This 207-nucleotide RNA was probed chemically with 2A3 and DMS. Source: RMDB library OK3TST, as collected in RNAgym. Conditions: 150 mM KOAc, 10 mM MgCl2 and 150 mM bicine (pH 8.5), 24 C. DMS (dimethyl sulfate) methylates the pairing face of unpaired adenines and cytosines. The 2A3 profile rests on 2,791 reads.
RNA sequence: GGGAACGACUCGAGUAGAGUCGAAAAGACGAGCGCGCCUUGUUCGGUGCCCUCGGGAAUGCCGGGCCAGACCCGAUCCGGGACGAACAGGGCCCGGGGGACGGCGCGGUACGUGGCGAGCCAGUCGGAUUGAAGUGCGCCCGCCUCGACGAGCGCGUAUAUAUUCGUAUUUCGAUACGAAUAUAUAAAAAGAAACAACAACAACAAC
Reactivity to 2A3 in 0.01 (KOAc 150mM, MgCl2 10mM, bicine 150mM(pH8.5), 24C), signal-to-noise 4, nucleotides 027 to 156: g080a040c040g010a010g050c030g000c010g010c020c000u120u110g060u110u100c040g020g050u070g070c040c010c010u010c020g000g000g030a130a060u130g060c040c030g040g050g030c030c050a020g040a180c010c000c040g010a030u050c100c080g010g000g030a050c020g020a130a040c050a150g100g060g000c020c010c030g000g000g000g000g010a030c070g030g010c020g000c040g020g000u040a070c040g000u030g010g020c010g010a000g010c020c020a060g050u070c050g020g070a090u100u300g090a110a030g130u040g050c060g000c000c010c000g010c000c050u090c050g070a110c040g020a070g040c020g000c010g020
Reactivity to DMS in 0.01 (KOAc 150mM, MgCl2 10mM, bicine 150mM(pH8.5), 24C), signal-to-noise 3, nucleotides 027 to 156: g020a090c000g020a080g040c060g030c030g020c010c010u010u010g010u000u000c100g040g060u000g020c010c020c020u000c030g030g020g020a070a100u000g040c020c020g020g020g030c010c040a160g020a300c010c020c020g000a050u010c090c050g000g000g010a260c040g000a080a100c120a300g010g020g010c020c000c010g000g010g010g010g000a130c050g010g010c000g050c010g010g010u000a040c060g010u010g000g010c020g010a040g030c010c020a210g010u010c020g010g000a220u010u010g010a130a170g010u010g010c040g020c010c000c010g030c010c030u000c140g010a060c040g000a060g000c010g020c030g000